[RMDB]
RNA sequence: GGGAACGACUCGAGUAGAGUCGAAAAACUGCCAUACGUGGCAGAAACACGCCUUACGAGGACUAAACAGCGUGUCUAAAAAACAGUCCUUCAUACCUGAUCUGGAGGGUAGAUCAGGAAUACUAAAAAAAUCGGGUGAAGUUCGCUUCACCCGAAAGUACCCACCUAUCUUCGGAUAGGUGGGUACAAAAGAAACAACAACAACAAC
Reactivity to 2A3 in 0.01 (KOAc 150mM, MgCl2 10mM, bicine 150mM(pH8.5), 24C), signal-to-noise 1, nucleotides 027 to 156: a000c000u000g040c000c000a050u040a060c160g080u010g000g000c000a010g000a000a040a000c010a000c000g000c000c000u060u080a010c020g040a000g000g000a000c010u070a000a100a000c000a000g000c000g020u000g010u080c100u050a050a000a000a000a020a000c050a030g000u000c010c000u030u060c060a070u020a140c000c000u000g010a000u000c000u030g130g000a100g060g120g080u120a020g010a000u020c020a040g020g000a010a010u070a070c160u150a000a000a050a050a000a000a160u040c000g000g000g000u000g000a000a030g020u050u180c120g080c120u000u000c000a010c000c000c010g000a000a000a000
The record gives the reactivity of an RNA of 207 nucleotides to 2A3. Conditions: 150 mM KOAc, 10 mM MgCl2 and 150 mM bicine (pH 8.5), 24 C. Values cover nucleotides 27 to 156.